[RMDB]
RNA sequence: GGGAACGACUCGAGUAGAGUCGAAAAGUACGAUUCGCCUGAUGAGGCUGUUCGUAGGUGGAAUCGCCGAGCAUGACCCCCGAGCAGCACGCCGCCAAGAUUCGUGAACUGGAAGCGCCUAUGGCUGCGGCCUAUCUGGCGGAAGUUCGUGCUGUCGCACUGUGAAGAAUUUCGAUUCUUCACAGUGAAAAGAAACAACAACAACAAC
Reactivity to 2A3 in 0.01 (KOAc 150mM, MgCl2 10mM, bicine 150mM(pH8.5), 24C), signal-to-noise 3, nucleotides 027 to 156: g070u060a020c020g000a030u000u080c010g020c010c020u100g090a080u060g060a050g210g070c140u130g100u090u010c000g050u060a010g080g000u090g050g020a010a030u020c020g030c050c030g060a070g040c100a140u210g090a140c000c000c000c000c000g020a030g010c000a000g000c000a010c000g030c000c000g000c010c010a120a070g000a010u060u100c060g020u100g080a080a060c040u090g060g050a070a090g010c010g020c030c090u300a170u260g040g000c070u070g000c050g010g000c000c000u020a020u000c000u010g000g000c000g000g000a020a000g040u120u110c020g010u000g000c000u000g020u000c000g040
Reactivity to DMS in 0.01 (KOAc 150mM, MgCl2 10mM, bicine 150mM(pH8.5), 24C), signal-to-noise 2, nucleotides 027 to 156: g000u000a050c030g000a070u010u000c050g000c010c010u010g000a150u010g000a070g010g010c050u000g010u030u010c020g030u000a050g000g040u000g020g020a100a040u010c030g040c010c030g000a110g030c070a060u010g000a300c030c020c000c020c020g020a150g000c040a040g020c000a030c040g000c010c010g030c000c020a040a150g020a090u000u010c050g000u010g020a070a240c100u010g010g030a220a160g000c030g030c060c030u000a170u010g050g060c010u000g040c040g030g000c030c010u000a090u000c050u010g000g010c000g000g000a040a110g010u000u000c010g030u000g010c000u000g000u000c030g020
Chemical mapping of a 207-nucleotide RNA with 2A3 and DMS. The RNA was probed in 150 mM KOAc, 10 mM MgCl2 and 150 mM bicine (pH 8.5) at 24 C. DMS adducts were read by reverse transcription with MarathonRT. Values cover nucleotides 27 to 156. For 2A3, 1,228 sequencing reads were counted. For 2A3 the reverse transcriptase was SuperScript II with manganese.